[RMDB]
RNA sequence: GGGAACGACUCGAGUAGAGUCGAAAAGGCCUUUCGAGGCCGUCAUUCCGUAGGAAAUGGGAGGCAAAGAUCACGUUGAAACUUCUUCGAAAGAGGAAGUGGAGUGAUCAUUUGCCGACGAUCAUUUCCUAAACGGUCUAACCACGUUCGCGUGGAAGAAGCCUAGUUAAUUCGUUAACUAGGCUUCAAAAGAAACAACAACAACAAC
Reactivity to DMS in 0.01 (KOAc 150mM, MgCl2 10mM, bicine 150mM(pH8.5), 24C), signal-to-noise 2, nucleotides 027 to 156: g030g010c000c010u000u000u000c180g020a080g040g050c000c000g010u000c030a120u010u010c000c030g020u000a070g000g010a010a010a010u000g000g010g010a140g040g030c030a010a030a050g010a020u000c000a010c010g000u000u000g000a190a170a070c010u000u000c000u000u000c000g010a240a180a270g010a030g000g000a010a010g030u000g000g020a250g010u000g000a020u010c000a040u000u000u000g000c000c000g010a050c110g000a070u000c010a010u000u000u000c000c000u010a030a020a090c030g010g010u010c030u000a080a090c000c020a000c040g030u000u000c140g050c040g000u000g030g010a110a160
Reactivity to 2A3 in 0.01 (KOAc 150mM, MgCl2 10mM, bicine 150mM(pH8.5), 24C), signal-to-noise 1, nucleotides 027 to 156: g010g000c010c010u040u090u170c290g110a040g000g000c010c000g010u010c000a020u100u040c020c010g010u020a010g000g010a010a000a010u000g000g010g010a010g000g000c000a000a000a000g000a000u010c000a000c040g080u180u050g030a010a020a010c000u020u000c000u010u000c030g040a120a060a040g000a010g020g000a000a000g000u000g000g000a000g000u000g000a000u000c000a050u000u010u000g000c000c010g000a000c000g000a010u020c000a000u000u000u000c000c000u000a020a030a040c020g010g020u050c080u090a080a120c000c010a000c010g030u110u100c300g010c010g150u010g020g020a000a110